[RMDB]
Notes:
Structure probing data (2A3 and DMS) for a 207-nucleotide construct. Source: RMDB library RNAMAK, as collected in RNAgym. 2A3 adducts were read by reverse transcription with SuperScript II with manganese. The RNA was probed in 150 mM KOAc, 10 mM MgCl2 and 150 mM bicine (pH 8.5) at 24 C. Values cover nucleotides 27 to 156. The DMS profile rests on 4,385 reads. DMS adducts were read by reverse transcription with MarathonRT.
RNA sequence: GGGAACGACUCGAGUAGAGUCGAAAAUCCUAAGUCACACGUAACAAGAAGCGCACCAGGGAGGGUCUCGGAAACGAGACCCUUUGAUCUGGUGAACUACGCUUCCGCCCGUGUGAUAUGGAAAAUCGGACCAUUAUCUUCGGAUAAUGGUCCGAAAGCUUUAACUAAACUUCGGUUUAGUUAAAGCAAAAGAAACAACAACAACAAC
Reactivity to 2A3 in 0.01 (KOAc 150mM, MgCl2 10mM, bicine 150mM(pH8.5), 24C), signal-to-noise 1, nucleotides 027 to 156: u030c010c000u030a150a010g020u020c000a010c000a010c030g100u140a300a040c100a120a000g020a000a000g000c010g050c000a000c000c000a000g000g010g000a010g000g000g010u000c000u000c000g010g000a040a030a020c000g010a000g000a000c010c020c130u010u060u020g010a000u000c000u000g010g010u030g000a000a000c010u110a030c010g010c000u000u010c000c010g030c000c000c000g000u010g000u000g000a000u010a050u040g030g040a050a080a000a160u030c000g000g000a000c000c000a000u000u000a000u010c020u030u000c180g030g000a000u000a000a000u000g000g000u000c000c000g000a000a000a000
Reactivity to DMS in 0.01 (KOAc 150mM, MgCl2 10mM, bicine 150mM(pH8.5), 24C), signal-to-noise 2, nucleotides 027 to 156: u000c000c000u010a050a260g020u000c010a010c000a030c000g010u000a110a120c080a150a030g000a030a010g000c010g010c000a020c010c000a040g000g000g000a020g020g030g020u000c000u000c000g020g020a130a100a290c020g010a030g000a020c000c000c000u030u000u000g000a090u010c000u000g030g020u010g000a020a190c040u000a110c000g000c000u000u000c000c020g000c260c130c000g010u010g050u000g010a020u000a130u000g020g010a060a030a060a130u000c000g000g000a040c000c000a010u000u000a010u000c020u000u030c300g030g000a040u000a020a010u000g000g030u000c000c000g010a000a000a080